[RMDB]
RNA sequence: GGGAACGACUCGAGUAGAGUCGAAAAGCUCUGUAAUGGGAUGGGAUCCGAAGCCACAUUGAGGGAUAAUACAGGCUCUCCCAUCCAACUCCUAUUCCAACACGUCCUCGUCGUACAGAGUGGUAACUAAGGUAUAGCUCCUUCGGGAGCUAUACAAGAUUUACGUUAUGUUCGCAUAACGUAAAUCAAAAGAAACAACAACAACAAC
Reactivity to DMS in 0.01 (KOAc 150mM, MgCl2 10mM, bicine 150mM(pH8.5), 24C), signal-to-noise 2, nucleotides 027 to 156: g000c000u020c000u000g030u000a050a070u000g010g000g020a040u000g010g030g010a100u010c050c050g010a060a080g010c030c010a070c090a210u000u000g010a100g010g000g010a120u000a100a120u000a120c070a110g020g000c020u000c030u000c010c020c000a090u000c030c000a040a020c020u000c010c020u010a130u000u000c040c040a070a100c070a090c070g000u020c020c050u000c050g030u010c040g020u000a050c040a020g000a050g020u000g010g000u000a050a160c050u010a080a110g020g030u000a010u000a020g000c000u000c000c020u000u000c300g030g010g000a000g020c000u000a000u020a000c010a040a060
Reactivity to 2A3 in 0.01 (KOAc 150mM, MgCl2 10mM, bicine 150mM(pH8.5), 24C), signal-to-noise 5, nucleotides 027 to 156: g020c010u000c020u000g050u040a120a120u160g110g000g010a010u000g000g000g010a040u130c030c040g030a080a000g020c020c000a040c060a150u130u200g060a300g040g000g020a050u100a190a040u110a190c120a080g000g000c000u000c000u020c000c020c000a010u000c000c010a010a010c000u020c010c000u070a100u100u030c040c010a060a020c020a030c090g100u070c020c040u100c070g070u030c030g000u030a010c020a000g030a010g030u050g020g020u110a110a110c120u040a140a020g080g000u000a000u000a000g000c000u010c000c000u020u030c070g070g000g000a000g070c010u000a000u000a000c000a000a000